The data come from the RNA Mapping Database (RMDB), library M2RFPK. Structure probing data (DMS and 2A3) for a 207-nucleotide construct.

RNA sequence: GGGAACGACUCGAGUAGAGUCGAAAAACGGUGCGGAAGUUCGCGCUUCCGUGAAACGCGAAAAUCGGACGGUGGCUGCAAGGCGCAUCGCAAAACCGCGGCAAGUGGAGUUAGCGAGAGGAGGCUGAAACCAUCCAACACUUCGGUGUUGGAUGAACAUAAGCUAUAGUUUCGACUAUAGCUUAUGAAAAGAAACAACAACAACAAC
Reactivity to DMS in 0.01 (KOAc 150mM, MgCl2 10mM, bicine 150mM(pH8.5), 24C), signal-to-noise 3, nucleotides 027 to 156: a090c020g010g030u010g020c020g000g010a070a060g030u000u000c250g030c280g010c010u000u000c020c060g030u000g010a050a060a040c020g020c020g000a080a050a110a120u000c040g030g010a070c020g020g020u000g010g020c020u000g020c140a070a090g010g020c020g000c030a080u000c040g010c030a080a040a100a110c040c030g010c040g050g030c060a060a090g020u000g010g010a100g010u000u000a090g020c020g010a070g000a130g000g020a070g010g020c030u000g000a080a070a140c080c000a010u000c010c000a010a010c000a010c010u000u010c300g030g020u010g010u000u000g010g000a000u000g000a020a100
Reactivity to 2A3 in 0.01 (KOAc 150mM, MgCl2 10mM, bicine 150mM(pH8.5), 24C), signal-to-noise 5, nucleotides 027 to 156: a000c040g020g010u080g010c010g010g030a040a010g020u120u170c050g030c030g010c070u020u000c000c010g010u010g030a090a060a010c080g030c020g070a050a030a010a100u130c050g040g010a020c020g000g040u020g030g000c040u040g010c030a050a070g050g000c050g000c050a030u040c010g000c030a040a060a020a060c060c020g010c010g070g010c080a080a050g030u070g060g050a070g020u080u070a020g020c050g040a030g010a020g050g020a010g010g020c020u030g040a060a020a000c030c000a000u010c000c000a000a000c000a000c010u050u090c220g080g000u000g000u000u000g000g000a000u000g000a000a000

DMS adducts were read by reverse transcription with MarathonRT.